[RMDB]
RNA sequence: GGGAACGACUCGAGUAGAGUCGAAAAGGUGUUCCGCCUCCCGAGAGGGGACGAGUGAGGCUUAUCCCGGGGAAUUCGGCGAAUCGUCCCCACAUAGCAGAUCCCAGGACCCCCUUCCAAAAUGACCCUAUUAUAGCACGUUCGCGUGCUAUAAUAGAAAAGAAACAACAACAACAAC
Reactivity to DMS in 0.01 (KOAc 150mM, MgCl2 10mM, bicine 150mM(pH8.5), 24C), signal-to-noise 2, nucleotides 027 to 126: g010g040u000g020u000u000c050c030g000c020c030u000c020c040c000g020a100g010a090g010g010g010g000a000c030g010a050g000u010g020a170g010g020c060u000u000a120u000c070c020c030g020g000g000g020a170a110u020u010c050g010g000c050g010a090a100u000c030g000u000c000c000c010c020a060c140a050u010a100g020c080a120g000a120u000c020c010c000a090g000g000a200c040c010c000c000c010u000u000c020c030a020a030a080a090u000g000a110c120c140
Reactivity to 2A3 in 0.01 (KOAc 150mM, MgCl2 10mM, bicine 150mM(pH8.5), 24C), signal-to-noise 1, nucleotides 027 to 126: g040g000u030g050u160u070c050c030g040c000c000u080c020c020c000g080a080g040a030g010g000g000g000a010c000g020a030g150u100g100a050g190g040c080u050u110a080u100c000c030c000g010g000g010g030a070a050u160u080c000g050g010c040g070a060a050u010c030g010u040c000c000c060c010a020c020a010u090a020g000c050a020g030a090u030c050c020c010a020g000g040a080c000c000c010c020c040u020u000c050c000a010a100a020a050u120g030a030c020c000